[RMDB]
Structure probing data (2A3) for a 207-nucleotide construct. For 2A3 the reverse transcriptase was SuperScript II with manganese. It was measured as part of the RMDB library RNAMAK.

RNA sequence: GGGAACGACUCGAGUAGAGUCGAAAACCAAUGCUGGGUUUCGACCCAGCAUUGGAAAAACCGUAGGCUGUCGGGAGCUGUUGGGUUCGAAAGAGCCCUCUAGCGACGAUCGCAGCCUAAACGGAAAAAGUGAACUGAACUUCGGUUCAGUUCACAACACCCAUGUAGUGUUCGCACUACAUGGGUGAAAAGAAACAACAACAACAAC
Reactivity to 2A3 in 0.01 (KOAc 150mM, MgCl2 10mM, bicine 150mM(pH8.5), 24C), signal-to-noise 2, nucleotides 027 to 156: c000c000a000a000u000g000c000u010g040g000g000u020u230u250c300g140a100c010c010c060a000g010c000a000u000u010g010g040a020a000a000a000a070c010c010g000u010a020g010g010c010u030g260u300c030g000g000g010a010g000c000u010g020u030u040g000g010g000u010u000c010g050a140a080a080g010a010g000c020c040c000u010c010u000a000g000c010g140a250c000g010a030u010c000g000c000a000g090c000c000u010a040a110a000c010g030g070a210a010a010a000a000g000u020g000a000a000c000u000g010a000a000c020u030u060c200g000g000u010u000c010a000g000u000u000c000a000c020a000a010